Conditions: 150 mM KOAc, 10 mM MgCl2 and 150 mM bicine (pH 8.5), 24 C. Chemical mapping of a 177-nucleotide RNA with DMS and 2A3. For 2A3 the reverse transcriptase was SuperScript II with manganese. For DMS the reverse transcriptase was MarathonRT.
RNA sequence: GGGAACGACUCGAGUAGAGUCGAAAAGGAAAGUAAGCGUGGAAGACGGAAGCGUUGCAAUGGGUUCGGCUUACAAGAAAUGGGCGAUAUCAAAGCUCAUAAUGGAAAAGUACCAUACAACAUUCAACGCCUUUUCAUAUUUCGAUAUGAAAAGGCGAAAAGAAACAACAACAACAAC
Reactivity to DMS in 0.01 (KOAc 150mM, MgCl2 10mM, bicine 150mM(pH8.5), 24C), signal-to-noise 1, nucleotides 027 to 126: g010g020a090a100a110g010u010a160a060g010c030g040u000g020g000a120a190g000a040c090g000g010a070a090g010c090g000u000u000g010c040a040a110u000g010g000g030u020u010c120g050g000c040u000u000a070c070a040a140g030a090a040a000u000g010g000g000c010g000a050u000a080u010c300a040a060a250g000c040u000c010a020u010a040a040u000g000g000a070a070a080a140g000u000a050c020c020a070u000a040c080a010a010c010a070u000u000c030a090a150
Reactivity to 2A3 in 0.01 (KOAc 150mM, MgCl2 10mM, bicine 150mM(pH8.5), 24C), signal-to-noise 1, nucleotides 027 to 126: g000g010a140a000a050g030u070a110a000g000c070g090u110g070g080a080a050g040a030c020g020g020a040a030g070c030g020u040u110g020c050a070a050u060g070g010g000u080u060c030g070g090c020u060u130a010c010a080a030g100a010a110a000u030g000g000g020c000g010a000u030a010u250c110a050a080a000g000c000u000c000a000u080a090a020u040g020g010a030a160a000a090g060u080a070c000c000a010u010a100c020a040a010c010a050u130u120c010a070a020